[RMDB]
RNA sequence: GGGAACGACUCGAGUAGAGUCGAAAAGGGGUCGUCGAAAUUCUCCCUGGAAGCUUGGAUUUAAUAGCUGAAGCCUCCACGGCUAUUUGUCAGCUUCCCUGGAGAAAUAAGACGACGGAGGCACCCAAAGUAGAAUGUGGUUCGCCACAUUCUACAACUCCUUUAUGAUGUUCGCAUCAUAAAGGAGAAAAGAAACAACAACAACAAC
Reactivity to 2A3 in 0.01 (KOAc 150mM, MgCl2 10mM, bicine 150mM(pH8.5), 24C), signal-to-noise 2, nucleotides 027 to 156: g080g000g040g000u010c000g000u000c010g000a150a100a120u040u000c000u000c000c010c020u010g000g070a030a000g010c120u260u300g100g000a070u300u270u210a010a010u000a010g000c000u030g080a150a030g020c010c010u020c030c020a030c040g000g010c000u000a000u010u010u030g020u010c030a000g000c000u000u000c020c010c000u010g020g000a020g010a000a030a000u030a010a000g000a000c000g000a000c010g010g020a000g000g030c000a020c020c000c000a140a110a000g000u000a000g000a010a000u000g010u010g000g040u050u150c230g060c030c000a000c000a000u000u010c000u000a000c000a000a010